[RMDB]
RNA sequence: GGGAACGACUCGAGUAGAGUCGAAAAAUCUGCAUUCAAAAAACCAACUGCAAACGACGAACGUUUCGCACUCGCCGCUUAAACACCGGUGAGCCUUGCAACAGCACGCUGAUGGGCUGGGCAAGGGGGCCGCAAGGCUUCCAGGCUGCAAGGGAAUACUUAACUAGGUGUUCGCACCUAGUUAAGUAAAAGAAACAACAACAACAAC
Reactivity to DMS in 0.01 (KOAc 150mM, MgCl2 10mM, bicine 150mM(pH8.5), 24C), signal-to-noise 1, nucleotides 027 to 156: a030u000c040u000g030c100a150u000u020c050a000a080a030a050a110a050c010c040a060a110c060u000g020c050a140a060a020c020g000a100c080g000a110a100c060g010u000u000u000c090g080c100a130c000u020c010g010c020c010g040c010u010u000a150a130a160c110a050c170c000g040g030u000g000a020g000c010c000u010u000g020c020a110a070c020a050g030c030a070c080g050c000u010g010a230u000g010g010g050c010u000g000g000g000c000a060a030g040g000g040g060g060c020c000g060c180a060a160g000g010c000u020u000c010c000a080g060g010c010u030g020c020a100a070g000g000g000a110a110u000
Reactivity to 2A3 in 0.01 (KOAc 150mM, MgCl2 10mM, bicine 150mM(pH8.5), 24C), signal-to-noise 2, nucleotides 027 to 156: a010u040c070u060g030c030a090u070u170c110a080a080a050a060a040a110c040c020a070a080c040u070g000c040a030a050a050c030g120a020c040g060a160a040c030g010u000u000u050c090g000c020a000c000u010c000g000c000c010g000c020u030u040a060a000a000c020a000c020c000g030g000u010g000a000g000c000c000u020u010g000c010a030a020c000a030g000c000a010c070g090c050u110g080a150u210g070g010g000c000u010g010g010g020c000a040a060g010g000g000g010g020c000c010g000c060a090a010g010g000c000u000u000c000c010a030g050g000c010u010g000c000a000a010g000g000g040a040a080u050
Conditions: 150 mM KOAc, 10 mM MgCl2 and 150 mM bicine (pH 8.5), 24 C. An RNA of 207 nucleotides, treated with DMS and 2A3 and read out base by base. For DMS the reverse transcriptase was MarathonRT. The data come from the RNA Mapping Database (RMDB), library ARCHII. For 2A3 the reverse transcriptase was SuperScript II with manganese. For 2A3, 2,221 sequencing reads were counted.